[RMDB]
The record gives the reactivity of an RNA of 207 nucleotides to 2A3 and DMS. The 2A3 profile rests on 4,646 reads. Source: RMDB library OK3TST, as collected in RNAgym. Values cover nucleotides 27 to 156. For 2A3 the reverse transcriptase was SuperScript II with manganese. For DMS, 16,971 sequencing reads were counted. Conditions: 150 mM KOAc, 10 mM MgCl2 and 150 mM bicine (pH 8.5), 24 C.

RNA sequence: GGGAACGACUCGAGUAGAGUCGAAAAAGAAGGCUGUCGAUUCGCUCAGAUACUUUCUGUUGACCGUUGAACGGCGUAACGUUCCGGCACUUUGCAACAAUACUAUGAAUAGGUGCGCGCCCUUUGUUCUUCUUUGCGAUCUCAGUGAUAACAUCAAUAGUAAGUUAAGUUUCGACUUAACUUACUAAAAAGAAACAACAACAACAAC
Reactivity to 2A3 in 0.01 (KOAc 150mM, MgCl2 10mM, bicine 150mM(pH8.5), 24C), signal-to-noise 7, nucleotides 027 to 156: a000g120a030a010g070g030c050u040g020u080c040g070a090u090u070c030g030c040u020c030a020g030a050u120a150c070u110u190u050c030u060g050u070u080g060a140c030c050g000u020u070g030a040a020c020g040g000c060g090u090a100a050c020g010u010u020c010c000g030g000c030a030c040u120u100u150g050c020a050a040c010a070a140u130a200c070u130a100u230g070a120a070u090a150g020g010u030g030c090g000c010g000c030c000c020u080u060u100g040u050u020c000u050u010c000u050u100u060g020c040g050a090u020c020u010c030a050g030u070g100a080u090a140a030c030a070u120c030a030a070
Reactivity to DMS in 0.01 (KOAc 150mM, MgCl2 10mM, bicine 150mM(pH8.5), 24C), signal-to-noise 5, nucleotides 027 to 156: a080g020a090a050g020g030c020u000g040u000c010g010a140u000u000c090g030c040u010c040a110g020a130u000a080c070u000u000u000c020u010g020u000u000g010a070c050c030g000u000u010g020a040a080c040g010g010c120g010u000a040a110c010g010u000u000c010c000g000g020c010a040c050u000u000u010g010c090a060a110c060a060a120u000a090c070u000a100u010g000a060a120u000a050g010g030u000g020c040g020c020g020c030c000c050u000u000u000g020u000u000c020u000u000c010u000u000u010g030c040g010a070u010c020u000c090a120g020u010g010a070u000a050a040c030a150u000c030a030a270